[RMDB]
RNA sequence: GGGAACGACUCGAGUAGAGUCGAAAACCUGUUGACUUCGGUCAACAGGAAAAGGUGGAUGCUACGCUACCGAAGUAGCAUAAGUGCAGAAGGAACGCACAAAAACUUAUCCGUUCGCGGAUAAGAACACAAGAGAUUUCUUCGGAAAUCUCUUGUGAAAAGAAACAACAACAACAAC
Reactivity to DMS in 0.01 (KOAc 150mM, MgCl2 10mM, bicine 150mM(pH8.5), 24C), signal-to-noise 2, nucleotides 027 to 126: c020c000u000g000u020u000g000a000c000u000u020c180g010g010u010c020a000a000c000a000g010g000a040a020a070a140g020g000u000g000g010a050u000g000c000u020a020c020g010c070u000a260c050c020g000a020a070g040u000a000g010c000a000u000a040a170g000u000g010c040a080g000a120a110g010g000a070a120c180g010c000a020c050a030a030a070a130a140c000u000u010a000u000c010c000g010u020u000c260g020c000g000g020a000u000a000a000g000a140a140
Reactivity to 2A3 in 0.01 (KOAc 150mM, MgCl2 10mM, bicine 150mM(pH8.5), 24C), signal-to-noise 2, nucleotides 027 to 126: c000c000u000g010u000u020g000a020c020u050u030c230g100g000u000c010a010a010c000a010g000g040a030a120a010a060g130g030u070g030g090a030u000g010c000u020a010c040g000c030u030a070c010c020g100a120a010g000u000a010g000c000a000u030a050a100g000u010g000c010a010g050a250a060g180g050a160a030c060g010c010a020c010a020a050a000a020a020c010u010u000a000u000c000c010g030u020u040c300g010c010g040g000a000u010a000a000g030a050a010
Conditions: 150 mM KOAc, 10 mM MgCl2 and 150 mM bicine (pH 8.5), 24 C. An RNA of 177 nucleotides, treated with DMS and 2A3 and read out base by base. For 2A3, 2,427 sequencing reads were counted. In probing experiments dimethyl sulfate is read out at A N1 and C N3, which are open when not base-paired. The DMS profile rests on 1,509 reads. It was measured as part of the RMDB library M2PK50.